[RMDB]
RNA sequence: GGGAACGACUCGAGUAGAGUCGAAAAUGUAAGCCCUAUUUAGUUAUACAAUUAGAUUUAAUAAAGCCAACAUAUAUUGUUACUUUAGGGAGAUUCGCCACAAAGGAAAUAUUUGAUUUGUUUGGCCGAACGAAGUGUUAUUCGUAACACUUCGUUCAAAAGAAACAACAACAACAAC
Reactivity to DMS in 0.01 (KOAc 150mM, MgCl2 10mM, bicine 150mM(pH8.5), 24C), signal-to-noise 2, nucleotides 027 to 126: u010g000u020a090a250g010c040c000c010u000a100u010u010u020a080g010u000u010a190u010a130c050a020a040u000u000a080g000a060u000u000u010a100a140u010a070a050a100g020c030c030a000a030c010a020u000a060u000a040u000u000g010u000u000a140c010u000u000u000a060g010g000g000a110g020a180u010u010c170g010c000c000a050c060a010a020a060g000g000a070a050a020u010a040u000u000u000g000a200u000u000u010g000u010u000u000g040g010c050c140
Reactivity to 2A3 in 0.01 (KOAc 150mM, MgCl2 10mM, bicine 150mM(pH8.5), 24C), signal-to-noise 2, nucleotides 027 to 126: u100g020u020a080a200g140c000c000c000u010a050u040u060u040a000g020u010u040a150u030a300c020a020a100u130u070a110g030a070u040u160u300a190a150u180a200a230a040g020c020c000a040a000c010a010u030a030u010a040u170u070g020u050u020a050c000u010u000u050a030g000g050g010a090g050a220u140u120c060g080c060c000a030c020a030a060a000g050g030a100a080a060u090a070u020u030u150g150a180u020u000u180g040u030u030u070g030g000c000c000